[RMDB]
RNA sequence: GGGAACGACUCGAGUAGAGUCGAAAACGGCUGCUGGGCCGGCCCGAUCCGGUGCACAAACCGGUCAAGCAACUGUUCUGGUACCGGUCGAGCAAGUUCGUGAUGCGCCGUUGGCUGCCGGUCGGUACCAAUGUCAUCUCUUCGGAGAUGACAUUGGAAAAGAAACAACAACAACAAC
Reactivity to DMS in 0.01 (KOAc 150mM, MgCl2 10mM, bicine 150mM(pH8.5), 24C), signal-to-noise 3, nucleotides 027 to 126: c010g010g010c030u000g000c050u010g010g010g000c010c010g000g010c130c040c070g000a080u010c070c040g020g030u000g010c110a090c170a070a100a180c020c010g010g000u010c040a090a040g010c070a040a040c060u010g010u000u000c090u000g010g010u000a000c010c000g010g020u000c000g000a110g000c030a050a080g010u000u000c060g000u010g010a110u010g000c060g010c060c030g030u010u010g010g010c040u000g010c010c010g020g000u000c010g010g000u000a030
Reactivity to 2A3 in 0.01 (KOAc 150mM, MgCl2 10mM, bicine 150mM(pH8.5), 24C), signal-to-noise 2, nucleotides 027 to 126: c000g040g000c050u060g030c030u090g030g060g010c010c010g000g030c040c000c000g010a030u080c090c060g030g010u020g030c050a020c080a140a170a000c010c000g020g040u010c040a040a010g050c030a040a160c060u130g110u230u020c030u070g010g000u000a020c000c020g020g020u000c010g030a050g090c030a170a030g080u040u110c080g030u130g040a150u140g000c060g000c010c020g000u040u110g030g080c010u020g050c000c000g010g010u020c000g000g020u030a020
An RNA of 177 nucleotides, treated with DMS and 2A3 and read out base by base. The 2A3 profile rests on 1,839 reads. For DMS the reverse transcriptase was MarathonRT. For DMS, 3,377 sequencing reads were counted.